[RMDB]
RNA sequence: GGGAACGACUCGAGUAGAGUCGAAAACGGGGUCAAAUUGACUCUAGUAGGGAGUCCGUUACUUUAUAGCGACUCCCUAACGGAGUCAGGUUGACUCCCUUAAAACAGUUGUCCUUCGGGACAACUGCCAUAAUUAGCAGUUCGCUGCUAAUUAUGGAAAAGAAACAACAACAACAAC
Reactivity to 2A3 in 0.01 (KOAc 150mM, MgCl2 10mM, bicine 150mM(pH8.5), 24C), signal-to-noise 8, nucleotides 027 to 126: c030g000g000g000g000u000c000a010a020a030u010u010g000a000c000u000c000u010a060g080u010a000g010g010g010a010g010u080c270c040g030u040u020a090c070u220u300u190a270u130a130g020c010g000a000c000u000c000c000c000u000a010a000c010g010g000a000g000u000c000a000g000g010u000u000g000a000c000u070c000c000c000u050u110a030a090a010a020c010a000g000u000u000g000u000c000c000u020u060c200g040g010g000a000c000a000a000c000u000g000
Reactivity to DMS in 0.01 (KOAc 150mM, MgCl2 10mM, bicine 150mM(pH8.5), 24C), signal-to-noise 5, nucleotides 027 to 126: c260g000g000g000g010u000c010a000a010a060u010u000g010a010c000u000c000u000a070g010u000a050g000g010g000a020g000u000c080c090g020u000u000a060c300u020u000u010a130u000a050g010c020g010a040c000u000c000c000c000u000a000a010c020g010g000a010g000u000c000a010g000g010u000u000g010a020c000u010c000c000c040u000u010a030a060a090a290c010a010g000u000u010g000u000c000c000u000u020c200g020g010g010a010c000a000a000c000u000g010